[RMDB]
Overview:
Chemical mapping of a 177-nucleotide RNA with 2A3 and DMS. 2A3 adducts were read by reverse transcription with SuperScript II with manganese.
RNA sequence: GGGAACGACUCGAGUAGAGUCGAAAAGAUAUGGAUGUCACGAAAGGCAUCGAUCACGCGGUCGGAAACGACCGCCGUGGGAGCCUAGUGACAUCCUAAGUCAAAGCCUUAGGUUCGCCUAAGGCAACGUUUCACUUAUGUUCGCAUAAGUGAAACGAAAAGAAACAACAACAACAAC
Reactivity to 2A3 in 0.01 (KOAc 150mM, MgCl2 10mM, bicine 150mM(pH8.5), 24C), signal-to-noise 3, nucleotides 027 to 126: g010a010u020a010u050g000g000a000u000g010u030c010a010c040g110a300a300a130g000g000c020a070u300c180g000a020u020c000a010c000g020c000g000g010u000c010g010g020a000a000a000c000g010a000c020c000g000c020c010g000u020g010g000g000a010g000c010c000u050a070g000u010g000a000c010a000u000c000c000u000a000a000g000u000c000a030a170a070g000c000c010u000u000a020g050g050u050u080c300g120c080c000u010a000a000g010g000c000a000a000
Reactivity to DMS in 0.01 (KOAc 150mM, MgCl2 10mM, bicine 150mM(pH8.5), 24C), signal-to-noise 3, nucleotides 027 to 126: g010a020u000a050u000g000g000a010u010g000u000c010a030c010g010a130a180a070g030g000c020a300u010c220g000a010u010c000a000c020g010c000g020g000u010c000g040g010a020a010a060c000g030a010c000c010g020c100c050g020u000g000g000g000a020g050c000c000u000a160g000u000g010a000c010a000u000c000c000u000a000a030g000u000c010a100a140a170g000c010c000u000u000a010g000g010u000u020c290g010c000c000u000a010a030g000g010c000a000a020